Source: RMDB library OK1LIB, as collected in RNAgym. This 177-nucleotide RNA was probed chemically with 2A3 and DMS. Values are in units of 0.01, from 0 to 300, in steps of 10.
RNA sequence: GGGAACGACUCGAGUAGAGUCGAAAAAGAAUGUGAUGAAGAUUGUGAUGACGAACACAGAAAGAAGGGGUCCAAACAAUACAAGCGUGGUGAAGUCGAAAACCCACGUGAAACUAGGGAUUGCGACGGCAUGGAUUUACUUCGGUAAAUCCAUGCCAAAAGAAACAACAACAACAAC
Reactivity to 2A3 in 0.01 (KOAc 150mM, MgCl2 10mM, bicine 150mM(pH8.5), 24C), signal-to-noise 1, nucleotides 027 to 126: a000g130a010a030u300g000u060g160a220u200g050a070a000g000a010u000u280g030u000g070a030u010g000a080c010g000a090a000c000a090c150a040g000a000a030a000g050a240a060g000g000g000g000u000c090c010a000a000a080c000a000a000u160a020c000a200a040g000c030g000u000g000g010u000g070a170a000g100u130c120g000a030a050a050a050c000c000c000a020c000g000u020g000a000a000a000c050u060a000g000g000g020a050u000u170g150c040g050a060c060
Reactivity to DMS in 0.01 (KOAc 150mM, MgCl2 10mM, bicine 150mM(pH8.5), 24C), signal-to-noise 1, nucleotides 027 to 126: a010g070a090a010u030g000u060g000a040u000g000a100a010g000a080u000u000g130u000g000a010u070g000a140c240g050a030a140c080a000c080a060g000a000a100a160g000a140a030g000g010g000g000u000c000c010a050a070a020c130a110a000u050a080c120a020a160g000c000g110u000g000g000u000g000a010a100g030u000c140g000a120a040a090a040c120c000c000a000c030g000u000g010a100a120a110c090u020a150g060g000g000a000u000u010g000c120g000a070c260
For 2A3 the reverse transcriptase was SuperScript II with manganese.